[RMDB]
An RNA of 177 nucleotides, treated with 2A3 and DMS and read out base by base. The DMS profile rests on 884 reads. The reactions ran in a buffer of 150 mM KOAc, 10 mM MgCl2 and 150 mM bicine (pH 8.5), at 24 C.

RNA sequence: GGGAACGACUCGAGUAGAGUCGAAAAUGGCAGGGACCAGUGAGCAAGAAUGAGAUCAACAACCUCCUGGUGGCUCGGUGCCCACAGUCCACGCAGCAGGACGCUCCAGGCCUCUGCCAGGCGAGUCUCCGAUGAGACUUUUCGAAGUCUCAUCGGAAAAAGAAACAACAACAACAAC
Reactivity to 2A3 in 0.01 (KOAc 150mM, MgCl2 10mM, bicine 150mM(pH8.5), 24C), signal-to-noise 1, nucleotides 027 to 126: u020g000g000c020a000g000g030g000a010c000c000a030g050u130g250a000g000c030a090a110g080a190a160u260g060a220g060a220u250c060a020a130c020a020a080c040c000u000c000c000u010g010g010u000g000g040c040u040c100g090g090u130g050c040c040c000a030c010a010g060u080c000c000a010c010g090c000a010g060c000a000g000g010a010c050g000c010u000c010c030a020g000g010c000c000u030c010u000g000c000c000a000g000g010c000g060a040g020u000c010
Reactivity to DMS in 0.01 (KOAc 150mM, MgCl2 10mM, bicine 150mM(pH8.5), 24C), signal-to-noise 1, nucleotides 027 to 126: u000g010g030c000a040g070g000g070a000c010c000a080g020u010g010a040g040c000a210a080g000a180a070u010g000a130g010a150u020c200a100a110c170a060a100c040c000u000c130c010u000g010g020u000g010g020c020u000c070g010g000u000g000c010c000c010a080c110a080g000u000c010c010a030c090g020c130a060g020c070a040g030g000a080c100g000c020u000c020c070a290g000g050c000c000u000c000u000g000c020c030a050g000g020c070g030a060g000u010c030